An RNA of 207 nucleotides, treated with 2A3 and read out base by base. The 2A3 profile rests on 1,341 reads. The data come from the RNA Mapping Database (RMDB), library OK3TST. High 2A3 reactivity points to a flexible backbone, as in loops and unpaired stretches.
RNA sequence: GGGAACGACUCGAGUAGAGUCGAAAACGAUCUGUUCGCAGAUCGAGCUACGGAGACGUAGCAAGGCACGCGAGACCUCCGGCGCGUGCGAUACCGGAAUUAAGACCAGAUCCACGUGUGCUAGGAUCUGGCGGAGGUCAUUGAUACAGCACACGAAGUACACUCUCGAAUUCGUUCGAGAGUGUACAAAAGAAACAACAACAACAAC
Reactivity to 2A3 in 0.01 (KOAc 150mM, MgCl2 10mM, bicine 150mM(pH8.5), 24C), signal-to-noise 1, nucleotides 027 to 156: c010g000a000u000c000u000g020u040u000c130g020c040a000g000a000u000c010g000a000g000c000u000a000c000g000g010a050g010a040c000g000u000a000g000c010a000a030g160g000c000a000c000g000c000g000a000g050a040c010c010u030c000c000g020g010c000g000c000g000u000g000c000g000a010u100a090c000c010g080g100a180a190u220u160a250a000g090a130c000c000a000g000a000u020c000c000a010c080g000u010g000u000g000c000u000a010g000g000a010u000c000u000g000g000c010g000g000a010g020g000u010c010a000u000u040g040a020u040a140c020a000g000c000a000c000a000c010g000a100a000